[RMDB]
RNA sequence: GGGAACGACUCGAGUAGAGUCGAAAACAAAACAAAGCGUGAUAGUCGCGAAAUAAACACGGUCGCACGAGUACUUUCGUGUACGACGGAAAAGUGCGUCCGUGGAAAACUAUCCAAACAAAAGAAAGGGAUAUCUUAUCUUCGGAUAAGAUAUCCCAAAAGAAACAACAACAACAAC
Reactivity to 2A3 in 0.01 (KOAc 150mM, MgCl2 10mM, bicine 150mM(pH8.5), 24C), signal-to-noise 3, nucleotides 027 to 126: c040a010a120a040a000c060a010a060a000g000c010g070u090g000a010u000a000g030u040c010g000c040g210a150a030a130u230a020a100a000c000a010c040g000g000u000c000g010c010a010c010g000a000g030u000a020c030u050u090u010c030g040u110g240u300a120c020g050a000c000g000g000a010a000a000a020g000u000g000c010g010u010c000c010g000u000g000g000a000a070a000a000c010u020a000u000c020c030a130a120a150c040a130a190a120a000g160a130a040a000
Reactivity to DMS in 0.01 (KOAc 150mM, MgCl2 10mM, bicine 150mM(pH8.5), 24C), signal-to-noise 2, nucleotides 027 to 126: c040a150a000a120a210c210a020a140a220g000c010g000u000g000a010u000a000g030u050c000g000c020g000a140a120a070u060a040a170a180c000a000c000g000g000u000c000g000c000a000c000g000a100g000u050a120c110u000u000u000c000g000u080g000u000a090c120g000a000c040g000g000a000a010a230a130g000u000g000c000g010u000c000c000g020u020g000g000a090a100a060a030c000u000a000u000c000c300a010a110a110c180a170a030a090a040g000a070a160a100